[RMDB]
RNA sequence: GGGAACGACUCGAGUAGAGUCGAAAAUGCAUACAUAUAACAUGUUUUUAUUUCUGCAUUUACUAUUUGACAGACACUUGGAUCAUUUCUAGUUUGGGCUGUUAAGGUUGAUGCAGCCACGAACAUGCAAUAGGGUUCGAUUCGUCGAACCCUAUUGAAAAGAAACAACAACAACAAC
Reactivity to DMS in 0.01 (KOAc 150mM, MgCl2 10mM, bicine 150mM(pH8.5), 24C), signal-to-noise 7, nucleotides 027 to 126: u000g010c110a090u010a110c130a060u010a080u010a100a250c050a030u000g000u000u000u000u010u010a060u030u020u010c040u000g000c000a000u000u000u000a050c040u000a110u010u000u000g000a020c000a010g000a110c050a030c050u010u000g010g010a020u010c240a120u000u000u000c000u000a040g010u000u000u000g020g010g020c000u000g000u000u000a050a050g010g000u000u000g010a040u000g000c000a000g010c270c170a070c190g000a120a020c040a050u000g000
Reactivity to 2A3 in 0.01 (KOAc 150mM, MgCl2 10mM, bicine 150mM(pH8.5), 24C), signal-to-noise 4, nucleotides 027 to 126: u080g030c010a040u060a200c030a030u200a070u060a300a030c020a030u030g050u010u060u030u050u080a150u040u130u000c010u010g000c000a010u000u020u010a030c030u070a140u120u050u080g010a000c000a000g030a000c000a000c020u040u100g030g020a050u120c050a210u100u160u000c040u030a070g060u060u170u100g150g110g070c000u000g000u030u030a030a000g030g000u030u010g000a010u040g000c000a000g000c000c000a060c030g020a020a000c010a020u050g040
An RNA of 177 nucleotides, treated with DMS and 2A3 and read out base by base. The RNA was probed in 150 mM KOAc, 10 mM MgCl2 and 150 mM bicine (pH 8.5) at 24 C. DMS adducts were read by reverse transcription with MarathonRT. Source: RMDB library OK2TRN, as collected in RNAgym. 2A3 adducts were read by reverse transcription with SuperScript II with manganese. The 2A3 profile rests on 3,914 reads.